[RMDB]
RNA sequence: GGGAACGACUCGAGUAGAGUCGAAAAUCUAUCGAGUUCGCUCGAUAGAAAAAAAGAUAUGGACGAUUGAAUGGCAACAGCGAGAGAUUCGGAAACGAAUCUUCGACAUGCCACAAUCGUCCUAAGUCAAAAACACCGAAGUUUCGACUUCGGUGAAGCUGAGAGACUAGUUCGCUAGUCUCUCAGCAAAAGAAACAACAACAACAAC
Reactivity to 2A3 in 0.01 (KOAc 150mM, MgCl2 10mM, bicine 150mM(pH8.5), 24C), signal-to-noise 1, nucleotides 027 to 156: u040c010u010a000u000c000g010a000g010u130u140c170g110c090u010c060g010a010u030a000g070a000a060a000a000a000a000a010g010a000u020a010u040g000g000a000c010g000a000u000u030g090a180a280u070g050g000c130a300a050c080a230g000c020g010a110g020a000g000a090u000u010c000g040g000a000a000a020c000g000a010a000u000c000u000u000c010g010a010c070a100u300g020c000c000a000c000a000a000u000c000g000u000c010c000u010a000a000g000u000c010a000a000a000a000a220c010a000c030c000g010a000a000g000u060u030u300c300g100a010c000u000u000c000g000g000u010g060a000a000